[RMDB]
RNA sequence: GGGAACGACUCGAGUAGAGUCGAAAAACAAGCUGCACGUGCGUCCGAGCAGUUUUCGAAAUCGCACGUUUCACGUAAAGACGCAACUCUACUCGAGAAAGCGAGUCACGCAGACAGCGUCAAGGAACAAUCACUUGACAUUCGUGUCAAGUGAUUGAAAAGAAACAACAACAACAAC
Reactivity to 2A3 in 0.01 (KOAc 150mM, MgCl2 10mM, bicine 150mM(pH8.5), 24C), signal-to-noise 3, nucleotides 027 to 126: a010c060a040a030g030c070u070g010c040a010c040g010u020g020c010g030u040c030c000g020a020g020c120a140g050u070u070u130u110c030g050a070a050a070u130c020g010c010a000c010g000u020u100u120c070a040c060g070u090a020a100a060g040a020c010g000c040a020a010c000u000c010u000a010c000u000c000g010a000g000a010a000a000g000c020g020a020g080u070c030a000c090g030c020a030g060a220c040a040g030c000g010u030c050a030a050g080g030a080a000
Reactivity to DMS in 0.01 (KOAc 150mM, MgCl2 10mM, bicine 150mM(pH8.5), 24C), signal-to-noise 4, nucleotides 027 to 126: a090c110a110a130g030c080u010g010c300a110c000g040u010g010c000g000u010c050c040g030a060g020c230a110g010u020u010u010u000c060g040a040a070a030u010c010g010c030a020c020g000u000u000u000c050a070c110g010u000a070a080a090g000a110c030g000c040a120a030c000u010c000u000a000c000u000c000g000a000g010a020a080a110g020c030g000a130g010u000c070a020c050g020c020a110g020a050c130a080g000c020g020u000c040a060a090g010g010a090a090